[RMDB]
RNA sequence: GGGAACGACUCGAGUAGAGUCGAAAAGAAAGAAAGAAUAGAAGUCGAGCUCAAGCACAAAUUCGAUCUUGCUUAACAAGGUACCGGCAAAGUCAGAUCGAAUUUGGGCUUGAGAUUGUCUUCUUAAGUUAUUGUUAUAUUUCGAUAUAACAAUAACAAAAGAAACAACAACAACAAC
Reactivity to 2A3 in 0.01 (KOAc 150mM, MgCl2 10mM, bicine 150mM(pH8.5), 24C), signal-to-noise 9, nucleotides 027 to 126: g080a010a070a010g110a040a100a010g090a060a050u150a110g000a010a000g020u020c010g010a010g010c000u000c000a000a000g000c010a000c000a010a000a000u000u000c000g000a000u000c000u000u020g000c000u070u060a100a040c040a100a070g180g020u120a170c090c070g100g000c120a060a020a000g010u030c020a000g000a000u000c000g000a000a000u000u000u000g000g000g000c000u000u000g000a000g000a000u000u000g000u000c000u000u010c000u010u010a100a010
Reactivity to DMS in 0.01 (KOAc 150mM, MgCl2 10mM, bicine 150mM(pH8.5), 24C), signal-to-noise 6, nucleotides 027 to 126: g010a130a100a080g000a120a090a100g000a130a110u010a010g000a030a010g010u000c000g000a020g010c000u000c000a000a000g000c000a020c000a000a000a010u000u000c000g010a010u000c000u000u010g010c000u000u000a090a140c100a080a110g010g030u020a070c170c100g000g000c090a080a010a010g000u000c220a000g000a000u000c010g010a010a000u000u000u000g000g000g000c010u000u000g000a000g000a010u000u000g000u000c000u000u000c000u000u000a030a100